[RMDB]
RNA sequence: GGGAACGACUCGAGUAGAGUCGAAAAAACCUGUUAUCAUUUGUGACCUACAACAUUUGAUAACGGUCAUUUUAGUAGGAUAUACUCUACCAGAGCCCACUUGUAGAGCGAAUUUAAGGGCUUAGCUUAGUGUGUCUUGAUCAUCAGGCUACACCAACUUACAAGGCUAGUUCGCUAGCCUUGUAAGAAAAGAAACAACAACAACAAC
Reactivity to DMS in 0.01 (KOAc 150mM, MgCl2 10mM, bicine 150mM(pH8.5), 24C), signal-to-noise 1, nucleotides 027 to 156: a070a000c070c020u020g020u000u010a020u010c000a000u020u000u020g000u000g000a140c090c070u000a090c000a130a000c010a010u000u000u020g010a010u000a020a010c010g040g060u010c060a090u000u010u000u010a130g000u010a050g030g000a150u000a300u000a080c010u000c000u000a030c010c030a100g020a010g020c010c010c040a290c100u000u000g000u000a060g000a110g030c020g010a140a020u000u000u000a140a140g000g020g010c040u000u010a030g040c050u020u000a000g080u020g000u010g000u000c070u040u010g000a220u000c160a130u000c070a050g000g010c000u000a000c020a090c000c000a000a130
Reactivity to 2A3 in 0.01 (KOAc 150mM, MgCl2 10mM, bicine 150mM(pH8.5), 24C), signal-to-noise 3, nucleotides 027 to 156: a010a010c020c010u020g000u010u000a010u000c000a010u000u000u000g000u010g010a050c010c010u030a030c020a040a000c010a000u000u020u000g010a000u000a000a000c010g000g070u140c090a110u020u080u130u300a020g000u000a000g000g020a000u020a000u010a030c010u000c000u000a010c010c020a010g000a010g040c010c000c000a050c020u010u010g000u000a000g000a010g010c000g000a020a030u190u210u150a170a110g000g010g010c010u050u100a030g030c030u070u070a030g040u030g000u000g010u100c030u100u180g060a160u190c020a120u090c040a040g000g020c010u070a030c010a010c010c010a010a080
Description: Structure probing data (DMS and 2A3) for a 207-nucleotide construct. For 2A3, 1,837 sequencing reads were counted. For 2A3 the reverse transcriptase was SuperScript II with manganese. Conditions: 150 mM KOAc, 10 mM MgCl2 and 150 mM bicine (pH 8.5), 24 C. DMS adducts were read by reverse transcription with MarathonRT.